[RMDB]
RNA sequence: GGGAACGACUCGAGUAGAGUCGAAAAGCACAAUGGGCGAAAGCCUGAUGCAGCGACGCCGCGUGAGGGAUGACGGCCUUCGGGUUGUAAACCUCUUUCAGCAGGGAAGAAGCGAAAGUGACGGUACACCCUCAUUAACUUUCGAGUUAAUGAGGGUAAAAGAAACAACAACAACAAC
Reactivity to DMS in 0.01 (KOAc 150mM, MgCl2 10mM, bicine 150mM(pH8.5), 24C), signal-to-noise 8, nucleotides 027 to 126: g010c040a090c100a110a080u010g010g010g010c020g000a110a070a150g010c020c010u000g000a070u000g010c030a090g010c020g000a110c140g010c020c040g010c090g020u000g000a030g010g000g000a050u020g010a170c300g000g000c000c020u000u010c160g010g000g020u010u010g020u000a010a250a280c020c010u000c020u000u010u010c080a080g020c040a040g010g000g020a050a080g000a110a110g010c050g010a040a050a090g030u000g010a070c060g010g010u000a110c180
Reactivity to 2A3 in 0.01 (KOAc 150mM, MgCl2 10mM, bicine 150mM(pH8.5), 24C), signal-to-noise 3, nucleotides 027 to 126: g010c010a000c010a040a140u170g020g000g000c010g040a090a000a020g020c000c000u050g030a040u070g000c030a020g020c020g050a040c090g000c030c010g030c040g030u040g040a020g030g060g010a040u300g020a040c000g000g020c000c000u070u080c140g090g000g020u000u020g000u010a010a020a020c000c010u020c000u000u070u060c030a040g010c020a040g030g060g000a080a120g020a040a000g030c040g020a040a060a010g050u070g040a030c040g020g020u030a050c060
Overview:
An RNA of 177 nucleotides, treated with DMS and 2A3 and read out base by base. For 2A3, 6,002 sequencing reads were counted. The reactions ran in a buffer of 150 mM KOAc, 10 mM MgCl2 and 150 mM bicine (pH 8.5), at 24 C. For 2A3 the reverse transcriptase was SuperScript II with manganese.